[RMDB]
RNA sequence: GGGAACGACUCGAGUAGAGUCGAAAACUUUGUGGGAAGGCCAGGAGAAAUUCUGCAUCUAGGGAUCUUCACACAAGAGAUCUUGCCUAACAAACAAGGUGCCUUACCAGCGCUUGGGCUUCAGGAAUAUCCUAUUAACAUUCGUGUUAAUAGGAUAAAAAGAAACAACAACAACAAC
Reactivity to 2A3 in 0.01 (KOAc 150mM, MgCl2 10mM, bicine 150mM(pH8.5), 24C), signal-to-noise 6, nucleotides 027 to 126: c000u030u040u060g010u030g020g020g030a030a000g020g000c030c020a010g020g060a030g060a030a140a060u160u070c050u070g050c040a120u020c070u110a080g060g010g070a110u000c010u050u030c040a040c010a010c010a080a030g040a000g010a100u010c000u040u100g010c000c000u070a100a050c060a100a100a010c020a030a020g030g000u030g010c000c000u040u060a080c010c020a030g020c040g000c080u050u080g040g020g000c000u100u080c080a050g000g090a100a060
Reactivity to DMS in 0.01 (KOAc 150mM, MgCl2 10mM, bicine 150mM(pH8.5), 24C), signal-to-noise 9, nucleotides 027 to 126: c030u000u000u000g030u000g000g000g010a080a020g010g000c040c010a100g010g010a020g000a110a090a150u010u010c080u000g010c160a120u010c110u010a100g010g010g010a050u000c000u010u000c030a060c090a040c140a050a060g010a080g000a050u000c030u000u000g010c020c020u000a060a120c180a080a080a080c110a050a030g000g010u000g010c020c070u000u010a090c110c070a210g000c050g010c080u010u000g010g010g010c050u000u000c070a070g000g010a130a130